[RMDB]
RNA sequence: GGGAACGACUCGAGUAGAGUCGAAAAGGGGAAGGAUCUCGAGGAAAACAUCUCCCAAGAAGAAGCGGGAACAAUCUCAAGAAGAGGAGGAUUCCCCGAGACGCUGACGGAAACCCCGGGAACAAGGGAACUAAGAGUAGUUCGCUACUCUUAGUUCAAAAGAAACAACAACAACAAC
Reactivity to DMS in 0.01 (KOAc 150mM, MgCl2 10mM, bicine 150mM(pH8.5), 24C), signal-to-noise 3, nucleotides 027 to 126: g030g020g020g000a200a130g000g000a070u000c000u000c010g020a050g000g000a040a010a120a180c070a120u000c040u000c010c010c010a090a130g010a070a100g010a060a130g040c300g030g010g000a100a080c100a110a140u000c020u000c020a080a170g000a150a100g000a030g010g010a000g010g000a260u000u000c010c000c000c000g000a040g020a020c020g020c060u000g000a130c150g000g020a090a110a150c020c020c000c020g000g000g000a090a070c130a050a070g010g000
Reactivity to 2A3 in 0.01 (KOAc 150mM, MgCl2 10mM, bicine 150mM(pH8.5), 24C), signal-to-noise 3, nucleotides 027 to 126: g010g020g000g000a000a070g060g020a090u000c000u010c010g010a020g020g030a010a030a030a040c040a190u030c010u020c020c020c010a010a040g090a050a010g040a060a020g070c090g010g030g000a030a020c040a090a120u030c020u000c030a040a060g080a060a010g040a150g030g000a000g020g010a010u010u000c000c000c010c000g000a010g000a000c050g000c140u070g040a030c050g020g040a040a070a100c000c000c000c010g000g030g010a050a020c040a050a030g080g030